[RMDB]
RNA sequence: GGGAACGACUCGAGUAGAGUCGAAAAGCGCUGUUUAUCUUCGCACCGAAGGUGUCAAGGUAAAGGUUGCCUAUCUAUCUGACACCUUUGCUGAUGCAAAGGACACAAUGCUCAGCAUGACUGGCAAGGUGGGUGCGAAAUGCCCAGAGAAUCUGGGAUCCUCUACUCGAUUCGUCGAGUAGAGGAUAAAAGAAACAACAACAACAAC
Reactivity to DMS in 0.01 (KOAc 150mM, MgCl2 10mM, bicine 150mM(pH8.5), 24C), signal-to-noise 2, nucleotides 027 to 156: g020c060g000c000u020g010u000u000u000a050u010c020u000u000c020g040c020a040c010c000g010a070a050g060g050u000g050u010c060a100a130g060g010u010a020a020a070g010g010u020u000g020c060c060u000a150u000c060u000a070u020c050u000g010a030c020a080c020c000u020u010u010g070c010u000g010a130u020g040c070a040a100a180g000g000a150c190a080c040a070a190u000g000c020u000c020a060g000c030a150u000g000a130c040u020g010g020c040a050a150g010g010u000g000g020g020u030g010c010g010a030a050a040u000g020c010c000c000a030g000a230g000a090a190u000c000u010g000g030g000
Reactivity to 2A3 in 0.01 (KOAc 150mM, MgCl2 10mM, bicine 150mM(pH8.5), 24C), signal-to-noise 4, nucleotides 027 to 156: g060c070g010c070u020g080u070u070u030a060u040c050u030u000c000g010c010a000c020c000g040a050a030g010g000u010g010u010c060a090a140g030g020u100a130a110a110g100g140u150u130g070c010c010u090a130u100c040u050a020u020c010u010g000a010c000a020c030c000u000u010u010g010c010u020g000a040u230g040c030a050a060a050g070g040a030c050a010c020a220a070u020g000c010u010c120a010g000c010a000u100g050a110c040u020g020g070c020a040a030g100g010u060g030g010g010u000g010c000g010a020a000a020u070g000c000c000c000a010g020a000g020a030a090u080c000u000g000g000g000